[RMDB]
This 177-nucleotide RNA was probed chemically with DMS and 2A3. For 2A3, 611 sequencing reads were counted. The data come from the RNA Mapping Database (RMDB), library OK1LIB. 2A3 adducts were read by reverse transcription with SuperScript II with manganese. The RNA was probed in 150 mM KOAc, 10 mM MgCl2 and 150 mM bicine (pH 8.5) at 24 C.
RNA sequence: GGGAACGACUCGAGUAGAGUCGAAAAAAUUCGAAUUGUUUUUUAUCAUGAUCACGAAUAAUGUAUUGCAAAGUUGCUUUUUCAACAGUUCCUUCAAAGUUCAUUAAGUGAUAAAAGCCUUCGUAUCAAUAAGCGGUGUUUUCGAACACCGCUUAUUAAAAGAAACAACAACAACAAC
Reactivity to DMS in 0.01 (KOAc 150mM, MgCl2 10mM, bicine 150mM(pH8.5), 24C), signal-to-noise 1, nucleotides 027 to 126: a100a070u020u040c000g000a010a100u000u020g000u000u010u000u000u000u000a020u020c000a020u000g000a140u020c220a060c200g030a100a010u020a030a220u000g000u030a010u020u000g000c200a080a030a160g010u000u000g000c300u000u010u010u030u000c070a080a040c090a130g030u000u000c070c000u000u050c040a000a060a170g030u000u000c000a050u000u000a090a300g040u010g000a000u000a020a010a000a020g000c000c090u000u000c050g000u010a170u000c080
Reactivity to 2A3 in 0.01 (KOAc 150mM, MgCl2 10mM, bicine 150mM(pH8.5), 24C), signal-to-noise 2, nucleotides 027 to 126: a000a000u160u080c020g010a030a030u160u040g040u100u030u000u020u010u040a090u000c030a010u030g110a010u110c000a020c150g000a120a050u180a110a080u140g100u040a040u000u110g120c070a010a090a070g050u040u040g060c030u050u080u030u030u030c040a060a060c000a040g020u040u030c000c000u030u060c080a100a050a100g020u040u040c010a020u050u160a110a020g000u000g000a000u030a060a040a000a000g020c000c000u000u000c000g000u000a000u200c020